Description: Structure probing data (2A3 and DMS) for a 177-nucleotide construct. Conditions: 150 mM KOAc, 10 mM MgCl2 and 150 mM bicine (pH 8.5), 24 C. For 2A3 the reverse transcriptase was SuperScript II with manganese.
RNA sequence: GGGAACGACUCGAGUAGAGUCGAAAAUAAACAAAACAAAUUUAAACGGGUACGGUGCAGCAGAGAGGCUCGGCAGUUGCACCUUGAAGCGAGCCUUAAAAUAAACAAAACAAAAACAAAAAGAAAACGUCAUCUUGCACUUCGGUGCAGGAUGACGAAAAGAAACAACAACAACAAC
Reactivity to 2A3 in 0.01 (KOAc 150mM, MgCl2 10mM, bicine 150mM(pH8.5), 24C), signal-to-noise 3, nucleotides 027 to 126: u100a000a050a030c090a020a100a030a010c080a060a110a060u090u130u140a140a140a080c110g010g050g070u110a040c050g000g000u000g000c000a030g000c020a010g050a010g000a020g090g020c030u020c020g030g050c030a020g010u070u030g010c000a040c040c010u000u130g010a010a000g060c030g010a000g000c000c000u020u020a040a080a000a000u160a100a040a050c150a070a100a000a010c050a000a030a080a020a010c100a020a060a080a030a000g120a020a100a000a000
Reactivity to DMS in 0.01 (KOAc 150mM, MgCl2 10mM, bicine 150mM(pH8.5), 24C), signal-to-noise 1, nucleotides 027 to 126: u020a210a150a180c120a130a100a110a210c020a120a050a030u040u060u030a150a020a160c000g030g000g030u000a000c070g000g010u000g020c170a000g020c090a170g000a230g000a010g000g000c010u000c010g010g000c000a090g000u070u000g030c020a080c030c000u000u000g000a050a080g000c000g000a000g000c000c000u040u000a040a040a070a080u020a010a200a050c180a000a090a020a120c160a010a010a090a080a130c270a030a000a040a120a020g020a170a000a160a210